[RMDB]
This 177-nucleotide RNA was probed chemically with DMS and 2A3. The reactions ran in a buffer of 150 mM KOAc, 10 mM MgCl2 and 150 mM bicine (pH 8.5), at 24 C.
RNA sequence: GGGAACGACUCGAGUAGAGUCGAAAAGUGCUGCCAAGGGGAGCUGCAAAGACGCUGGAGGACAUUGAGGGGCUCAGAAGCUUCCCGGCAAUGAGCGGCAAUCCAGCAUUUGCUCAGCAGCAGCAGCGUUUUAAGAUAGCUUCGGCUAUCUUAAAACAAAAGAAACAACAACAACAAC
Reactivity to DMS in 0.01 (KOAc 150mM, MgCl2 10mM, bicine 150mM(pH8.5), 24C), signal-to-noise 6, nucleotides 027 to 126: g020u000g010c010u000g000c010c100a150a160g010g010g000g010a120g010c020u010g000c070a070a090a070g000a090c190g000c010u010g000g000a060g010g020a160c160a140u000u000g000a130g010g010g000g010c010u000c030a030g010a150a120g000c010u000u010c010c010c010g010g000c040a020a220u000g010a020g010c010g010g010c080a150a110u000c020c010a020g020c000a150u000u000u000g000c070u000c060a100g010c080a110g010c030a070g020c020a040g000c090
Reactivity to 2A3 in 0.01 (KOAc 150mM, MgCl2 10mM, bicine 150mM(pH8.5), 24C), signal-to-noise 3, nucleotides 027 to 126: g030u010g010c000u000g000c030c070a170a110g040g030g020g020a040g020c010u030g000c060a060a040a040g060a030c090g010c020u020g010g000a000g030g060a040c040a080u070u140g050a090g040g060g140g000c000u000c010a040g020a110a010g010c000u120u040c000c000c010g010g020c000a000a040u010g000a000g010c030g050g000c020a000a020u020c010c000a000g000c010a030u070u080u080g030c030u060c060a050g000c020a010g000c010a000g000c000a010g060c050